[RMDB]
RNA sequence: GGGAACGACUCGAGUAGAGUCGAAAAGGAGGAACACUACUGCGGGUACACAAACAAAGAAGCAACCGACCGCGUCGUUCUUCGGGAUGUGAUGGAAAGGGGAGAUUUAUGGUAUCACUCGGGAGACCUAUAUGACCAGCUUCGGCUGGUCAUAUAGAAAAGAAACAACAACAACAAC
Reactivity to 2A3 in 0.01 (KOAc 150mM, MgCl2 10mM, bicine 150mM(pH8.5), 24C), signal-to-noise 1, nucleotides 027 to 126: g030g000a000g000g000a000a010c050a000c060u180a010c080u170g010c040g000g000g090u160a040c070a010c020a060a300a010c050a000a170a010g040a050a050g300c060a060a020c050c000g150a030c020c040g030c000g000u060c010g010u000u000c060u060u000c010g000g000g000a100u070g100u150g070a100u070g070g000a090a040a070g070g010g040g010a060g010a060u100u060u050a120u170g060g040u010a030u170c050a040c000u010c010g040g010g010a100g070a030c040
Reactivity to DMS in 0.01 (KOAc 150mM, MgCl2 10mM, bicine 150mM(pH8.5), 24C), signal-to-noise 2, nucleotides 027 to 126: g000g030a030g000g010a060a030c050a110c140u010a070c070u000g040c100g000g000g000u000a110c150a070c180a070a020a090c200a070a080a060g010a050a090g010c060a080a110c030c020g030a090c080c060g020c100g030u010c090g010u000u020c010u000u010c030g010g000g000a120u020g030u010g010a070u020g000g000a060a050a060g000g000g000g000a050g010a090u000u010u000a090u010g010g000u000a090u000c060a060c100u000c020g000g010g000a080g010a110c150
Source: RMDB library OK2TRN, as collected in RNAgym. An RNA of 177 nucleotides, treated with 2A3 and DMS and read out base by base. For DMS, 1,172 sequencing reads were counted. The 2A3 profile rests on 776 reads. Conditions: 150 mM KOAc, 10 mM MgCl2 and 150 mM bicine (pH 8.5), 24 C.